The record gives the reactivity of an RNA of 207 nucleotides to 2A3 and DMS.
Reactivities are given for positions 27 through 156.
For 2A3 the reverse transcriptase was SuperScript II with manganese.
The DMS profile rests on 2,477 reads.
The reactions ran in a buffer of 150 mM KOAc, 10 mM MgCl2 and 150 mM bicine (pH 8.5), at 24 C.
RNA sequence: GGGAACGACUCGAGUAGAGUCGAAAAGACUACUGGUCUCUUUUCUUUUCCAAAGGAUUAAGUUUCAAAAGAAGGAUCAGACCACUCUUGUGGGGUGAAAUGGGGGUGGAGGAAAUAUUUGGAACAAGAGGAAUGUUUGCAGCAACACUGGAGUAGACUAGUCCUAAUUAUUCGUAAUUAGGACUAGAAAAGAAACAACAACAACAAC
Reactivity to 2A3 in 0.01 (KOAc 150mM, MgCl2 10mM, bicine 150mM(pH8.5), 24C), signal-to-noise 3, nucleotides 027 to 156: g020a020c060u110a050c050u120g000g030u040c040u020c000u070u070u050u080c010u060u070u020u000c030c020a120a050a070g040g010a040u130u100a100a060g170u040u060u080c090a090a070a000a000g030a010a010g020g000a030u020c030a010g040a060c020c010a020c020u090c020u130u140g010u040g040g010g010g030u010g050a040a140a150u140g010g000g000g000g060u070g000g040a020g000g050a010a090a010u110a060u040u130u080g040g010a020a010c000a040a040g010a010g050g040a040a040u080g020u080u100u080g050c040a030g020c000a000a020c020a010c060u050g070g000a020g050u070a030g030a030
Reactivity to DMS in 0.01 (KOAc 150mM, MgCl2 10mM, bicine 150mM(pH8.5), 24C), signal-to-noise 2, nucleotides 027 to 156: g010a140c050u000a080c140u000g050g020u030c020u000c000u000u020u010u000c030u010u000u000u010c040c030a060a240a190g020g010a140u000u020a090a210g020u010u020u010c060a100a110a060a070g000a060a080g020g000a070u010c030a060g010a080c000c030a050c050u000c040u000u000g000u000g000g010g050g000u010g000a030a120a100u000g000g010g000g010g060u000g000g010a070g020g010a030a100a050u000a070u000u020u000g000g030a080a100c060a030a100g000a120g030g000a040a070u000g010u010u000u000g020c070a070g030c010a030a040c030a030c020u000g010g010a070g030u010a110g020a160